[RMDB]
RNA sequence: GGGAACGACUCGAGUAGAGUCGAAAAUGAGAAUACUUUUAGUACAAGCGAGUACACGCAGUAUACUGCUACUUGUGUGAGAAUACUUUUAGUACAAGCGAGUACACGCAGUAUACUGCCACUUGUGGCAAACCGGGAUAUUCGUAUCCCGGUUUGCAAAAGAAACAACAACAACAAC
Reactivity to 2A3 in 0.01 (KOAc 150mM, MgCl2 10mM, bicine 150mM(pH8.5), 24C), signal-to-noise 4, nucleotides 027 to 126: u230g000a030g090a090a030u110a160c040u080u040u100u160a120g050u060a040c030a080a070g020c040g030a010g080u110a070c040a010c070g000c000a010g000u010a000u010a000c000u000g000c000u000a000c010u020u000g000u000g040u070g090a100g090a140a020u060a060c040u100u180u170u290a040g000u010a000c010a020a020g030c010g010a000g030u040a050c070a020c130g000c000a000g000u000a000u000a010c000u000g000c000c000a010c010u000u010g000u040g080
Reactivity to DMS in 0.01 (KOAc 150mM, MgCl2 10mM, bicine 150mM(pH8.5), 24C), signal-to-noise 2, nucleotides 027 to 126: u080g020a120g010a130a010u040a030c060u000u020u000u030a090g020u020a130c050a030a110g000c040g000a000g000u020a060c220a260c300g000c000a030g000u000a010u020a020c000u000g000c000u000a000c000u020u000g000u030g000u050g000a010g000a060a170u000a000c000u010u040u050u080a000g010u000a020c130a090a300g030c020g000a000g020u000a030c300a060c290g010c020a010g010u000a010u000a010c000u000g000c000c070a000c010u000u000g000u000g010

Description: Conditions: 150 mM KOAc, 10 mM MgCl2 and 150 mM bicine (pH 8.5), 24 C. Structure probing data (2A3 and DMS) for a 177-nucleotide construct. The 2A3 profile rests on 2,406 reads. 2A3 adducts were read by reverse transcription with SuperScript II with manganese. For DMS, 1,758 sequencing reads were counted. The data come from the RNA Mapping Database (RMDB), library OK1LIB.